[RMDB]
RNA sequence: GGGAACGACUCGAGUAGAGUCGAAAAGUGUCAUGAUGUUCGCAUCAUGACACGUCACACCUUUGUGACGCAACAACAGCUUGGAUUUACCCAUUGGGUUGUCAGCUGUGUUGGCGUCACUCUGGUUCGAGGAUCUGCGCGUUCGCGCGCAGAUCAAGUUUGGAGGAUCAUUCGUGAUCCUCCAAACAAAAGAAACAACAACAACAAC
Reactivity to 2A3 in 0.01 (KOAc 150mM, MgCl2 10mM, bicine 150mM(pH8.5), 24C), signal-to-noise 2, nucleotides 027 to 156: g010u000g000u000c020a000u010g010a010u000g040u090u160c270g000c150a000u010c010a000u000g000a000c010a010c000g000u000c000a070c020a000c010c000u020u000u030g020u000g000a000c000g000c000a010a010c020a030a070c000a050g020c030u230u300g230g040a140u230u270u270a090c080c020c110a290u200u300g020g010g000u040u010g030u000c040a000g000c000u000g020u010g050u010u020g170g000c000g000u000c010a000c000u000c010u000g040g000u060u190c160g180a100g210g020a010u030c000u000g000c000g000c000g020u060u050c220g000c030g000c030g000c070a000g000a000u010c000a000a010